[RMDB]
RNA sequence: GGGAACGACUCGAGUAGAGUCGAAAAGGUGGCUAGGACCCACCAGGGAGGGGAGGACCCAACUAGGCACCGAUUUAGCAUGUUCGUCCUUUCCCCGGGGGCCGAUUUAUUUUGGACGUUCAUGCGAGGGAACGUGUUCGUUCGCGAAUACGUUCCCAAAAGAAACAACAACAACAAC
Reactivity to 2A3 in 0.01 (KOAc 150mM, MgCl2 10mM, bicine 150mM(pH8.5), 24C), signal-to-noise 3, nucleotides 027 to 126: g010g000u000g000g050c000u000a010g040g000a080c000c000c000a020c020c030a010g040g040g030a040g020g010g000g000a100g030g080a040c000c000c000a020a010c010u000a010g060g020c000a010c000c000g000a010u070u070u120a020g000c000a000u010g000u000u000c000g000u000c000c000u010u010u030c000c000c000c000g000g000g010g020g010c020c010g010a010u030u080u020a190u020u070u080u080g000g000a000c000g000u000u000c000a000u010g000c000g000a060
Reactivity to DMS in 0.01 (KOAc 150mM, MgCl2 10mM, bicine 150mM(pH8.5), 24C), signal-to-noise 4, nucleotides 027 to 126: g000g000u000g010g000c010u000a030g020g000a150c040c020c010a150c210c130a100g000g010g010a160g000g000g000g010a200g030g010a160c030c000c010a110a100c020u000a010g000g030c000a010c000c020g010a140u040u030u010a120g010c000a010u000g000u000u000c000g030u000c000c000u000u000u000c010c000c010c070g000g000g010g010g020c080c020g000a060u020u030u000a080u010u010u010u010g000g000a010c010g000u000u000c010a000u000g000c000g010a130
The record gives the reactivity of an RNA of 177 nucleotides to 2A3 and DMS. For 2A3 the reverse transcriptase was SuperScript II with manganese. Conditions: 150 mM KOAc, 10 mM MgCl2 and 150 mM bicine (pH 8.5), 24 C.